[RMDB]
RNA sequence: GGGAACGACUCGAGUAGAGUCGAAAACGGGGCCGGUCCCCUCGGCGUUGUCCUCUGCCUGGUCGUUGUGAGCUGGGCUGGGUCUCUUCUUCUUCUCUUUCUUCUUCUUUGUCCUGCCCCCGGAAUGUACAAAUUAGGUUUUCGAACCUAAUUUGUAAAAAGAAACAACAACAACAAC
Reactivity to 2A3 in 0.01 (KOAc 150mM, MgCl2 10mM, bicine 150mM(pH8.5), 24C), signal-to-noise 1, nucleotides 027 to 126: c030g000g000g040g030c050c060g020g080u080c080c060c050c060u040c010g060g020c120g080u020u140g010u090c000c010u060c050u020g050c000c000u050g030g030u070c020g050u060u180g110u080g130a040g020c010u040g010g020g010c040u030g030g010g020u000c000u010c010u060u000c000u040u000c000u030u000c050u030c000u080u060u010c020u050u010c000u020u030c000u000u080u080g010u040c000c000u030g090c000c010c000c010c030g070g070a120a060u220g020
Reactivity to DMS in 0.01 (KOAc 150mM, MgCl2 10mM, bicine 150mM(pH8.5), 24C), signal-to-noise 3, nucleotides 027 to 126: c090g020g000g010g010c050c060g010g010u010c040c090c030c050u000c030g010g020c070g010u000u000g010u000c040c010u010c070u010g010c030c010u000g010g010u000c040g010u000u010g000u000g010a130g010c040u000g000g000g010c030u010g000g010g010u010c030u000c030u000u000c030u000u000c040u000u000c030u000c020u000u000u000c020u010u000c030u010u000c030u000u010u000g000u000c010c010u000g010c020c010c010c020c040g020g000a090a070u010g010